[RMDB]
RNA sequence: GGGAACGACUCGAGUAGAGUCGAAAAAAAUUAUGGUCGCCGGCACGUAUGUGCACACGGAGAAUGACACUCUUUCGCCGUCAACCGUGUCGGUAGUCUUGCACAUCAGGAAUCCGUCUGCGUUGAAUUUGUUAGAUUCGUUCGCGAAUCUAACAAAAAAAGAAACAACAACAACAAC
Reactivity to DMS in 0.01 (KOAc 150mM, MgCl2 10mM, bicine 150mM(pH8.5), 24C), signal-to-noise 2, nucleotides 027 to 126: a070a030a100u010u000a070u000g000g000u000c050g010c010c030g000g020c000a020c030g010u010a090u000g010u000g020c170a020c180a080c040g010g000a070g000a030a030u000g010a150c200a110c230u010c040u000u000u000c040g010c040c040g000u000c080a080a070c250c020g000u000g020u000c040g010g000u010a030g010u020c010u010u000g000c080a040c060a070u000c080a060g000g010a040a040u000c060c030g030u000c040u000g000c110g000u000u000g010a080a100